Structure probing data (2A3 and DMS) for a 170-nucleotide construct. For 2A3, 15,322 sequencing reads were counted.
RNA sequence: GGGAACGACUCGAGUAGAGUCGAAAACCAAGAGACGGACGACUUUCCCCUAUUGGUUGGGAAAAGUCCCGGAACCAGGAAAUGGGAAAGAGACGGUAGAAAAGAGCGAGCCUCCCAGUUUUCGAGUUAAGAUGUGGGUUCGCCCACAUCAAAAGAAACAACAACAACAAC
Reactivity to 2A3 in 0.01 (KOAc 150mM, MgCl2 10mM, bicine 150mM(pH8.5), 24C), signal-to-noise 8, nucleotides 027 to 129: c000c000a050a010g110a010g040a050c020g030g010a030c070g000a030c060u000u000u000c020c010c010c000u070a220u230u300g170g020u070u110g000g000g000a020a070a010a030g070u000c000c020c010g010g020a010a020c020c010a010g010g040a030a040a050u080g010g000g010a020a080a000g060a010g000a000c040g030g060u090a030g120a070a110a070a000g070a000g000c030g010a000g010c010c000u000c000c010c010a000g000u030u020u040u060c060g020a040g010u020u060a120a030
Reactivity to DMS in 0.01 (KOAc 150mM, MgCl2 10mM, bicine 150mM(pH8.5), 24C), signal-to-noise 6, nucleotides 027 to 129: c020c020a130a090g000a120g000a060c050g030g000a030c050g020a050c000u000u000u000c030c010c000c080u000a170u020u020g020g040u000u040g020g000g020a030a040a050a050g040u010c020c030c020g000g000a050a040c080c060a020g000g000a060a090a080u020g010g010g010a040a040a070g010a100g000a080c160g000g040u060a010g020a040a060a090a050g000a100g010c020g020a030g030c050c030u070c040c000c040a130g000u030u010u010u000c020g030a150g030u000u050a070a140

The reactions ran in a buffer of 150 mM KOAc, 10 mM MgCl2 and 150 mM bicine (pH 8.5), at 24 C.